[RMDB]
The record gives the reactivity of an RNA of 177 nucleotides to 2A3 and DMS. The RNA was probed in 150 mM KOAc, 10 mM MgCl2 and 150 mM bicine (pH 8.5) at 24 C.
RNA sequence: GGGAACGACUCGAGUAGAGUCGAAAACGUGUCGCAAGUUCUGUGGAUCCGAUGAAUGGCGGUGGAGGUGGUGGCACGCCGACGCUCAAGAGCUACGAGCCACGGAGGAGUGACGUCGGAGCCAACAUCCUCCUAGUACGUUCGCGUACUAGGAGGAAAAAGAAACAACAACAACAAC
Reactivity to 2A3 in 0.01 (KOAc 150mM, MgCl2 10mM, bicine 150mM(pH8.5), 24C), signal-to-noise 5, nucleotides 027 to 126: c010g020u020g020u040c010g010c070a080a110g080u110u050c030u070g050u060g040g010a050u020c020c040g030a040u080g070a090a110u100g060g010c060g070g010u050g040g050a080g000g030u050g000g010u040g030g020c030a020c050g020c020c010g020a020c020g010c020u030c050a070a040g030a020g110c030u060a050c080g030a020g030c010c010a030c030g010g040a060g000g030a090g020u070g030a010c010g010u030c000g010g020a030g030c020c000a020a020c020a090
Reactivity to DMS in 0.01 (KOAc 150mM, MgCl2 10mM, bicine 150mM(pH8.5), 24C), signal-to-noise 8, nucleotides 027 to 126: c060g020u000g010u010c030g030c060a070a200g000u010u000c030u000g020u000g000g010a070u000c030c030g010a100u000g000a100a100u000g000g000c060g010g010u000g000g000a130g010g020u000g000g030u000g010g010c060a090c100g010c020c020g010a050c070g010c060u000c050a100a110g010a130g010c060u000a120c160g010a110g010c010c040a050c080g010g010a090g010g000a300g000u000g010a080c040g000u000c020g010g000a120g010c020c030a050a070c160a110

In probing experiments dimethyl sulfate is read out at A N1 and C N3, which are open when not base-paired.
2A3 adducts were read by reverse transcription with SuperScript II with manganese.
The DMS profile rests on 12,067 reads.